[RMDB]
RNA sequence: GGGAACGACUCGAGUAGAGUCGAAAAAGCACCUUCAUCGACCUGAACAUCACCAUGCUGGAGGACCACGAGUUUGUGCCCCUGGAGGUCUACACGCGCCACGAGAUCAAGGACAGCGGCCUGCUGGAGAAAUAGACAUAUUCGUAUGUCUAUUUCUAAAAGAAACAACAACAACAAC
Reactivity to DMS in 0.01 (KOAc 150mM, MgCl2 10mM, bicine 150mM(pH8.5), 24C), signal-to-noise 9, nucleotides 027 to 126: a080g010c080a090c040c020u000u010c060a070u000c050g010a090c040c030u010g010a080a080c100a070u010c060a070c060c040a060u010g010c050u000g000g010a130g010g010a080c060c030a120c050g010a070g000u000u000u010g020u000g010c040c020c020c070u000g000g000a060g000g010u000c020u000a090c080a060c090g010c060g000c030c020a070c090g010a120g010a060u010c070a060a100g000g010a090c050a050g010c040g010g010c060c040u000g010c040u000g000g010
Reactivity to 2A3 in 0.01 (KOAc 150mM, MgCl2 10mM, bicine 150mM(pH8.5), 24C), signal-to-noise 7, nucleotides 027 to 126: a010g050c040a040c010c000u060u060c040a090u040c030g060a060c000c020u050g030a070a030c010a080u060c020a010c040c020a060u130g010c030u050g030g040a060g040g040a030c010c040a020c040g050a070g050u070u150u300g050u130g030c000c000c000c000u010g040g040a050g020g010u000c030u050a040c050a010c070g040c010g000c010c020a040c030g090a070g010a050u090c050a050a000g050g010a020c020a030g010c010g020g040c000c010u060g000c010u030g020g040
Chemical mapping of a 177-nucleotide RNA with DMS and 2A3. 2A3 adducts were read by reverse transcription with SuperScript II with manganese. For 2A3, 16,128 sequencing reads were counted. For DMS, 31,249 sequencing reads were counted. Values cover nucleotides 27 to 126.